Chemical mapping of a 207-nucleotide RNA with 2A3.
RNA sequence: GGGAACGACUCGAGUAGAGUCGAAAAAUGAAUUGUGCUUGCAGAAAGCCAGUAAACAGAUAGUUCAAUGAGAUAAGAGCUGUCUUAGGAGAUUGUACCUUUUUCUGAAAGAGCUGUGGUAAGGCUGACAGGUCAAGAUUGACUGACUGGCUGGGCCGUAGGUUAGCUUCUUCGGAAGCUAACCUACAAAAGAAACAACAACAACAAC
Reactivity to 2A3 in 0.01 (KOAc 150mM, MgCl2 10mM, bicine 150mM(pH8.5), 24C), signal-to-noise 2, nucleotides 027 to 156: a000u080g010a020a070u090u070g050u110g060c030u030u030g060c030a020g140a190a060a030g000c000c020a020g050u090a030a130a030c020a040g030a040u070a020g000u000u000c020a090a070u250g060a060g020a200u100a210a040g010a000g000c000u010g000u000c000u000u050a010g020g100a050g030a120u070u050g050u150a100c010c000u040u090u030u090u080c110u120g060a190a090a030g040a030g020c020u030g020u070g090g130u160a080a010g040g000c020u010g040a040c060a050g000g050u050c060a030a040g090a300u060u050g050a050c000u010g010a000c000u050g030g000c000u030g000g010g000c030c020
Reactivities are given for positions 27 through 156. The data come from the RNA Mapping Database (RMDB), library OK3TST. Conditions: 150 mM KOAc, 10 mM MgCl2 and 150 mM bicine (pH 8.5), 24 C.